[RMDB]
RNA sequence: GGGAACGACUCGAGUAGAGUCGAAAAGGCUUUGUCUCAACUUUUGAAGAUGACACAAUGGUGGAAGAACCAUAUGAGUCUAACUGAUGCUGAUCCACUCAAGUCCUUCAGAAAUAAAAGAUCCUCAUGCCAUGGCAUAUUUCGAUAUGCCAUGGCAAAAAGAAACAACAACAACAAC
Reactivity to 2A3 in 0.01 (KOAc 150mM, MgCl2 10mM, bicine 150mM(pH8.5), 24C), signal-to-noise 3, nucleotides 027 to 126: g070g010c070u070u170u130g120u030c000u040c070a060a090c030u150u120u010u030g050a050a060g070a130u270g050a000c000a000c000a160a180u080g000g000u020g000g080a190a060g050a080a100c040c010a000u020a120u190g050a030g070u060c100u070a060a270c080u070g030a020u040g060c090u010g090a050u030c010c000a000c020u060c040a030a090g020u050c000c000u000u020c020a020g090a010a060a040u140a020a050a020a000g010a150u030c000c000u040c000a050
Reactivity to DMS in 0.01 (KOAc 150mM, MgCl2 10mM, bicine 150mM(pH8.5), 24C), signal-to-noise 1, nucleotides 027 to 126: g000g000c010u040u000u010g000u000c000u000c180a190a270c300u000u000u000u110g020a060a000g000a110u030g070a000c030a080c250a080a000u000g000g000u000g000g000a070a060g000a040a120c090c100a000u000a000u060g000a040g000u000c000u020a100a300c070u000g030a080u000g020c040u010g010a080u000c000c000a020c000u050c080a090a230g030u000c010c020u050u000c000a070g030a000a180a070u000a020a080a000a000g030a000u020c020c000u020c250a140
Overview: Chemical mapping of a 177-nucleotide RNA with 2A3 and DMS. Conditions: 150 mM KOAc, 10 mM MgCl2 and 150 mM bicine (pH 8.5), 24 C. Values cover nucleotides 27 to 126. In probing experiments dimethyl sulfate is read out at A N1 and C N3, which are open when not base-paired. The DMS profile rests on 887 reads. The data come from the RNA Mapping Database (RMDB), library OK1LIB.